Structure probing data (2A3) for a 207-nucleotide construct. It was measured as part of the RMDB library OK3TST. The 2A3 profile rests on 464 reads. 2A3 adducts were read by reverse transcription with SuperScript II with manganese.
RNA sequence: GGGAACGACUCGAGUAGAGUCGAAAAAACAAUAUGAGUUUAUAUCAGCUGAGAUAUGGUGAUUACCGCUGUGCAACACUGGUCUGCAUCGUAUGUGCGUUCGUAGCUAUUCCGACCGUUUCAGCCCCCAUUACGAUCAAUCCUGCUUCAGACGCUGGCAAAUUUAGUUGUUCGCAACUAAAUUUGCAAAAGAAACAACAACAACAAC
Reactivity to 2A3 in 0.01 (KOAc 150mM, MgCl2 10mM, bicine 150mM(pH8.5), 24C), signal-to-noise 1, nucleotides 027 to 156: a000a000c180a190a030u200a180u170g000a010g060u070u220u150a150u030a020u020c030a000g010c010u020g010a000g000a140u100a010u170g030g040u060g040a100u060u210a060c000c010g060c100u050g010u020g000c020a120a070c030a030c070u040g000g000u090c060u040g000c030a030u080c090g000u030a010u070g090u030g050c040g010u020u070c010g040u000a000g040c030u070a080u030u150c030c060g000a010c000c000g020u000u070u030c040a040g000c000c000c000c000c000a010u050u040a020c010g000a000u060c010a030a020u030c000c010u070g000c010u000u000c010a000g000a040c020g060c140u060g050